[RMDB]
RNA sequence: GGGAACGACUCGAGUAGAGUCGAAAACAAAAUCCUCGAAGGCCAGCGCGCUCACUUUGAGGCCCGUGUUGAGCCCCAGAGUGAUUUGGGUCUGGUGAUCGAGUGGUACCACAACGGUCGCUCCAUCGGAAUCUUACUAAUUCGUUAGUAAGAUUCCAAAAGAAACAACAACAACAAC
Reactivity to DMS in 0.01 (KOAc 150mM, MgCl2 10mM, bicine 150mM(pH8.5), 24C), signal-to-noise 8, nucleotides 027 to 126: c110a100a070a120a070u000c040c000u000c010g010a060a140g010g000c010c010a020g000c040g010c020g020c290u000c000a040c050u000u000u000g000a040g010g000c020c040c030g030u010g010u010u010g000a080g000c010c010c010c010a070g010a010g020u000g000a020u000u010u000g020g010g010u010c020u000g010g010u000g000a270u000c030g000a030g010u010g020g010u010a120c060c030a060c120a070a240c220g000g010u000c010g010c020u000c010c020a110u010c150
Reactivity to 2A3 in 0.01 (KOAc 150mM, MgCl2 10mM, bicine 150mM(pH8.5), 24C), signal-to-noise 9, nucleotides 027 to 126: c030a000a100a010a050u030c000c000u000c010g010a030a010g210g000c000c000a010g000c120g000c000g020c080u010c010a030c030u050u030u050g010a020g020g000c020c040c010g140u210g120u120u210g040a040g010c000c000c000c010a000g010a010g010u040g010a020u090u070u100g050g000g030u090c020u020g030g000u030g040a080u020c010g000a010g010u110g030g030u080a060c020c020a040c040a090a040c040g010g010u010c010g000c020u010c010c010a110u160c070